[RMDB]
This 177-nucleotide RNA was probed chemically with 2A3 and DMS.
2A3 adducts were read by reverse transcription with SuperScript II with manganese.
It was measured as part of the RMDB library OK2TRN.
The RNA was probed in 150 mM KOAc, 10 mM MgCl2 and 150 mM bicine (pH 8.5) at 24 C.
For DMS the reverse transcriptase was MarathonRT.
RNA sequence: GGGAACGACUCGAGUAGAGUCGAAAACGUACAUGAUACCGUCGCUGCAGUACGUCAACGCUGUUGGUGUUGAGGGUGUGCUCCACGCUAGGCACGACCCGGUGGCCGUCGGCGAACAGAUGAUAUACCAAUCAUUGGAUUUCGAUCCAAUGAUUGGAAAAGAAACAACAACAACAAC
Reactivity to 2A3 in 0.01 (KOAc 150mM, MgCl2 10mM, bicine 150mM(pH8.5), 24C), signal-to-noise 4, nucleotides 027 to 126: c000g010u030a000c030a180u190g050a100u160a120c030c040g060u040c030g030c060u050g040c010a030g020u020a010c010g010u000c020a060a010c040g020c120u070g050u210u150g070g020u080g010u070u080g070a060g020g030g000u030g000u000g000c010u020c050c050a120c110g020c150u110a040g010g020c010a000c010g120a080c020c010c010g050g010u040g050g020c050c030g040u060c040g020g010c030g010a050a020c020a080g110a070u140g040a000u080a010u070a220
Reactivity to DMS in 0.01 (KOAc 150mM, MgCl2 10mM, bicine 150mM(pH8.5), 24C), signal-to-noise 5, nucleotides 027 to 126: c030g020u000a030c030a140u010g010a120u010a090c030c030g020u010c060g010c050u010g000c060a080g010u000a030c040g000u000c050a060a050c040g020c010u010g010u000u020g020g020u010g020u010u010g010a120g020g000g020u000g010u000g010c020u000c070c060a120c150g020c090u000a100g010g010c010a030c040g000a060c010c010c020g000g020u010g010g010c030c040g000u000c030g020g010c050g000a080a080c110a090g000a090u010g010a110u010a090u000a180